[RMDB]
The record gives the reactivity of an RNA of 177 nucleotides to DMS and 2A3. The 2A3 profile rests on 2,112 reads. The DMS profile rests on 2,832 reads. Conditions: 150 mM KOAc, 10 mM MgCl2 and 150 mM bicine (pH 8.5), 24 C. 2A3 is a SHAPE reagent: it acylates the 2'-hydroxyl of flexible nucleotides of all four kinds.
RNA sequence: GGGAACGACUCGAGUAGAGUCGAAAAAGAGUUCGCUUCGGCGAACUCUACAACGGGAUAACGGCCUCCCGGAAAGAUAAGGCGGAUUCCGUCCAAGCGCCGAGAGUGGUGCGUUCGCGCACCACAACUAAUAGGGUGUGUUCGCACACCCUAUUAGAAAAGAAACAACAACAACAAC
Reactivity to DMS in 0.01 (KOAc 150mM, MgCl2 10mM, bicine 150mM(pH8.5), 24C), signal-to-noise 3, nucleotides 027 to 126: a040g000a010g010u010u000c000g030c000u000u010c220g060g010c000g010a020a000c010u000c000u000a030c160a050a080c000g000g010g000a010u010a120a160c000g000g010c000c030u000c010c000c000g010g000a050a090a300g020a090u000a040a080g010g020c010g010g000a220u000u000c040c020g000u010c000c100a050a110g000c110g020c000c010g010a150g020a170g010u000g010g030u000g010c030g020u000u010c140g010c020g010c010a020c000c000a000c010a020a130
Reactivity to 2A3 in 0.01 (KOAc 150mM, MgCl2 10mM, bicine 150mM(pH8.5), 24C), signal-to-noise 2, nucleotides 027 to 126: a010g000a000g010u010u000c020g030c030u070u140c270g050g000c000g010a010a010c000u010c000u010a010c010a030a010c000g000g000g000a010u060a220a090c000g000g000c000c020u000c000c010c020g010g040a160a130a000g100a060u180a140a080g010g010c060g020g080a280u300u120c050c020g000u040c000c050a030a010g040c040g000c200c010g010a010g020a000g000u000g020g000u010g040c000g020u050u030c210g010c000g000c090a000c000c000a010c000a000a020